[RMDB]
RNA sequence: GGGAACGACUCGAGUAGAGUCGAAAAGCUGAUGAAGCAGUAAUAGAGAUGAGCAAGAUAACAGGAGGAAGUCAUUUUUAUGUUUCAGAUGAAGCUCAGAACAAUGGCCUCAUUGAUGCUUUUGGGGAAACCAACAUGUCUUCGGACAUGUUGGUUUAAAAGAAACAACAACAACAAC
Reactivity to 2A3 in 0.01 (KOAc 150mM, MgCl2 10mM, bicine 150mM(pH8.5), 24C), signal-to-noise 1, nucleotides 027 to 126: g080c010u030g030a080u080g030a060a060g000c020a000g010u030a040a070u070a100g060a000g030a070u090g010a020g100c020a050a060g010a190u140a160a000c040a030g040g030a040g080g090a070a010g080u060c060a020u000u070u070u050u100a050u070g000u000u030u010c070a040g010a190u080g030a070a010g000c030u070c140a010g080a030a010c040a020a030u100g020g010c020c000u010c010a000u040u000g080a040u040g030c040u080u060u030u030g000g010g010g010
Reactivity to DMS in 0.01 (KOAc 150mM, MgCl2 10mM, bicine 150mM(pH8.5), 24C), signal-to-noise 3, nucleotides 027 to 126: g030c020u000g010a080u020g000a050a040g000c000a080g010u010a110a100u000a130g020a070g000a180u010g010a100g000c040a090a080g000a070u010a060a070c090a050g010g010a160g000g020a080a090g010u010c110a070u000u000u000u000u000a060u030g000u010u010u010c030a110g000a100u000g000a050a090g010c030u020c100a070g000a090a080c160a060a060u000g000g000c020c030u010c020a010u010u000g000a070u000g020c050u000u000u000u000g010g010g000g000

Notes
The record gives the reactivity of an RNA of 177 nucleotides to 2A3 and DMS. For 2A3, 823 sequencing reads were counted. Conditions: 150 mM KOAc, 10 mM MgCl2 and 150 mM bicine (pH 8.5), 24 C. It was measured as part of the RMDB library OK2TRN. For 2A3 the reverse transcriptase was SuperScript II with manganese. For DMS, 2,456 sequencing reads were counted.